[RMDB]
This 177-nucleotide RNA was probed chemically with 2A3 and DMS.
2A3 adducts were read by reverse transcription with SuperScript II with manganese.
Source: RMDB library OK2TRN, as collected in RNAgym.
The reactions ran in a buffer of 150 mM KOAc, 10 mM MgCl2 and 150 mM bicine (pH 8.5), at 24 C.
DMS adducts were read by reverse transcription with MarathonRT.
RNA sequence: GGGAACGACUCGAGUAGAGUCGAAAAUCAGAAUGGUGGGCUGUGAAGAACUGGGAGGGCCAAGACUCAGGGAGGCCAUCUGGAUGGGGAAGGUGUGAGCCGAGGCCCAGAAUGGAGCACCCAGGGGCGAUUACCUGAGAUUCGUCUCAGGUAAUCGAAAAGAAACAACAACAACAAC
Reactivity to 2A3 in 0.01 (KOAc 150mM, MgCl2 10mM, bicine 150mM(pH8.5), 24C), signal-to-noise 1, nucleotides 027 to 126: u110c010a010g130a160a120u110g050g000u060g030g010g000c070u050g050u050g160a130a110g010a100a030c030u060g000g010g030a100g000g050g020c000c020a030a010g030a020c030u020c080a020g030g050g000a060g040g080c030c010a020u030c040u090g110g020a090u070g030g000g030g000a010a050g010g030u080g010u040g030a010g030c000c000g020a050g000g030c000c000c020a000g000a040a040u120g040g040a040g050c020a030c010c020c000a000g000g010g000g030
Reactivity to DMS in 0.01 (KOAc 150mM, MgCl2 10mM, bicine 150mM(pH8.5), 24C), signal-to-noise 3, nucleotides 027 to 126: u010c060a120g010a080a080u000g030g010u010g000g010g020c050u000g010u000g020a100a090g020a130a120c040u000g020g020g020a130g030g020g020c030c050a040a140g010a080c050u000c030a090g010g000g020a130g000g000c080c020a050u010c060u000g000g000a100u000g010g010g000g000a090a100g010g030u000g000u000g000a090g010c010c010g010a260g020g020c030c010c010a060g000a040a080u010g010g000a070g000c070a090c030c000c010a060g010g000g000g000